[RMDB]
RNA sequence: GGGAACGACUCGAGUAGAGUCGAAAAUACCACGAUUUUUUCGUGAUGCCUAACCACUUUUUGAGGAACAUUCGAGAGCGUAUUGAGUCAGCGGAUAUAGGGCCUAAUUCUCAGGUUAUUUUGAGAAAUUGUGUCAAUGCCGAACUUGAUGUGGGCCUGCGUGUCUACUGUUCGCAGUAGACACGCAAAAAGAAACAACAACAACAAC
Reactivity to 2A3 in 0.01 (KOAc 150mM, MgCl2 10mM, bicine 150mM(pH8.5), 24C), signal-to-noise 1, nucleotides 027 to 156: u130a000c000c030a010c000g000a010u000u000u100u130u300u130c100g000u040g080a120u280g030c000c000u040a060a080c030c030a050c020u090u080u000u080u180g070a150g040g000a110a000c010a020u090u040c120g000a010g000a000g130c000g000u060a030u010u000g000a000g010u010c050a000g010c010g000g070a000u240a000u000a100g050g000g060c000c000u010a020a110u110u070c010u000c000a000g040g000u090u140a120u140u300u180u030g000a000g000a040a030a030u120u150g040u000g000u090c120a060a010u300g010c000c000g010a000a060c030u050u180g000a070u200g080u010g050g020g000c000c040
Chemical mapping of a 207-nucleotide RNA with 2A3. Reactivities are rounded to 0.1 and cut off at 0 and 3. As a SHAPE reagent, 2A3 marks flexible, mostly unpaired nucleotides at the ribose 2'-OH. Values cover nucleotides 27 to 156. For 2A3, 330 sequencing reads were counted. The RNA was probed in 150 mM KOAc, 10 mM MgCl2 and 150 mM bicine (pH 8.5) at 24 C.